Structure probing data (DMS and 2A3) for a 177-nucleotide construct.
The RNA was probed in 150 mM KOAc, 10 mM MgCl2 and 150 mM bicine (pH 8.5) at 24 C.
For DMS the reverse transcriptase was MarathonRT.
Reactivities are given for positions 27 through 126.
RNA sequence: GGGAACGACUCGAGUAGAGUCGAAAAGUGGUUUGAUUGCUUUGACAGCUAGGAUGUUAGCUUGGAAGCAGCUAUUCAUUUAAAGAGUGCGUAACAGCUCACUAGUCGAGCGAUCGAGCGUGGAUAACAAUUCUUCUUAAUUCGUUAAGAAGAAUUGAAAAGAAACAACAACAACAAC
Reactivity to DMS in 0.01 (KOAc 150mM, MgCl2 10mM, bicine 150mM(pH8.5), 24C), signal-to-noise 9, nucleotides 027 to 126: g020u010g010g010u000u000u000g000a030u000u000g010c010u000u000u020g030a080c280a090g000c080u010a080g010g010a050u000g010u010u000a010g000c010u000u010g020g010a100a100g020c140a040g010c020u000a020u010u010c030a020u000u000u010a050a070a110g000a080g010u000g000c070g000u010a090a120c170a170g000c010u000c020a090c040u000a070g010u000c020g000a010g000c010g010a020u000c010g010a030g010c030g020u010g010g000a130u010a070a170
Reactivity to 2A3 in 0.01 (KOAc 150mM, MgCl2 10mM, bicine 150mM(pH8.5), 24C), signal-to-noise 9, nucleotides 027 to 126: g160u140g030g030u030u020u030g020a040u010u010g000c020u050u070u280g060a060c040a020g030c040u050a040g060g040a050u040g020u060u020a000g000c000u020u050g070g040a070a020g040c020a000g000c010u020a030u080u130c030a030u020u040u130a060a080a010g050a010g020u050g010c040g040u050a090a030c020a060g000c000u000c010a020c010u030a050g030u120c020g010a000g000c000g000a010u010c010g000a010g010c030g040u100g050g030a090u060a190a020